This 207-nucleotide RNA was probed chemically with 2A3. For 2A3, 419 sequencing reads were counted. For 2A3 the reverse transcriptase was SuperScript II with manganese.
RNA sequence: GGGAACGACUCGAGUAGAGUCGAAAAAGCCACUUCGCCAGCGAUGGGUUUAACUUGCCAGUUUUCUCCCCAUAUUUGGCUGGAGACUCUUAAUUACAUUGUUCUUUUACUUCUCACAUGUAUAUGUGCAUUUACUGAAGGGAGAGGCGCGGUAGGGCUCAUUACGCCCAUUCGUGGGCGUAAUGAGAAAAGAAACAACAACAACAAC
Reactivity to 2A3 in 0.01 (KOAc 150mM, MgCl2 10mM, bicine 150mM(pH8.5), 24C), signal-to-noise 1, nucleotides 027 to 156: a010g050c020c000a030c000u090u030c040g040c000c020a020g010c050g040a040u060g000g000g090u130u160u060a010a050c040u110u200g060c070c040a090g000u000u060u150u060c120u050c000c020c000c020a020u030a010u110u040u100g030g040c060u090g000g000a020g020a010c020u040c030u160u270a190a140u150u100a030c030a060u050u070g030u100u080c060u100u030u020u020a110c010u080u040c030u010c020a080c000a030u080g070u300a060u150a010u300g030u060g020c010a040u000u050u110a140c060u060g020a060a000g020g000g000a040g000a000g010g000c010g070c000g010g010u010a050g030g010g010